Annotation
Structure probing data (DMS and 2A3) for a 177-nucleotide construct. DMS adducts were read by reverse transcription with MarathonRT. The 2A3 profile rests on 7,572 reads. In probing experiments dimethyl sulfate is read out at A N1 and C N3, which are open when not base-paired. For 2A3 the reverse transcriptase was SuperScript II with manganese. For DMS, 7,460 sequencing reads were counted.

RNA sequence: GGGAACGACUCGAGUAGAGUCGAAAAGAUAUGGAGUUGUUUCGCUUGGAUUUAUAGGGUCAACGGUUAACAUGUCGGAAACGACAUGUUAACCGGACCCUAUUGUCAGCGAGCAACUCCUAAGUCACAUGAUCAUAUUCUUCGGAAUAUGAUCAUGAAAAGAAACAACAACAACAAC
Reactivity to DMS in 0.01 (KOAc 150mM, MgCl2 10mM, bicine 150mM(pH8.5), 24C), signal-to-noise 4, nucleotides 027 to 126: g010a050u010a300u010g000g000a030g020u000u000g010u000u010u010c010g000c000u010u010g030g000a030u000u000u000a000u000a010g000g010g010u000c010a100a150c010g000g010u000u000a000a010c000a000u000g000u000c000g020g000a150a080a300c010g010a010c000a000u000g010u000u010a000a000c000c000g010g010a010c000c000c000u000a000u000u000g010u000c010a040g000c010g010a030g000c000a010a010c010u000c000c000u000a020a060g020u000c040a300
Reactivity to 2A3 in 0.01 (KOAc 150mM, MgCl2 10mM, bicine 150mM(pH8.5), 24C), signal-to-noise 4, nucleotides 027 to 126: g040a000u120a110u260g020g000a020g020u010u030g030u150u300u140c000g000c050u110u260g200g020a060u290u300u060a040u100a020g000g010g000u040c050a230a240c120g000g020u010u000a010a000c000a030u010g000u020c000g050g030a100a090a080c030g000a010c010a010u000g010u000u020a000a010c010c010g000g000a000c000c000c000u010a000u000u000g000u000c000a000g000c000g010a010g000c000a000a000c010u010c010c000u000a020a000g020u020c020a020